RNA sequence: GGGAACGACUCGAGUAGAGUCGAAAAACACCCUCGCCCCGAAGCAAGUAAGAUAGAGAAAAAGCGGUUCUCGGGAGCUUCAGUUGUUUCCACCGGGUAGUAGCCGAAGCGACAGCGCAAAGGGGGCCCUAUGAAUUAACUUCGGUUAAUUCAUAGGAAAAGAAACAACAACAACAAC
Reactivity to DMS in 0.01 (KOAc 150mM, MgCl2 10mM, bicine 150mM(pH8.5), 24C), signal-to-noise 1, nucleotides 027 to 126: a120c150a190c020c010c000u020c110g020c020c010c000c020g000a110a120g000c020a160a150g020u020a030a110g020a170u030a120g010a070g000a010a030a040a110a080g020c110g000g010u000u000c040u000c000g000g000g000a110g000c020u000u000c030a040g040u020u000g000u000u020u020c000c020a160c080c100g010g000g010u020a070g010u000a050g000c000c060g010a040a100g040c020g020a040c090a070g010c090g010c070a050a050a150g020g010g010g010g010c180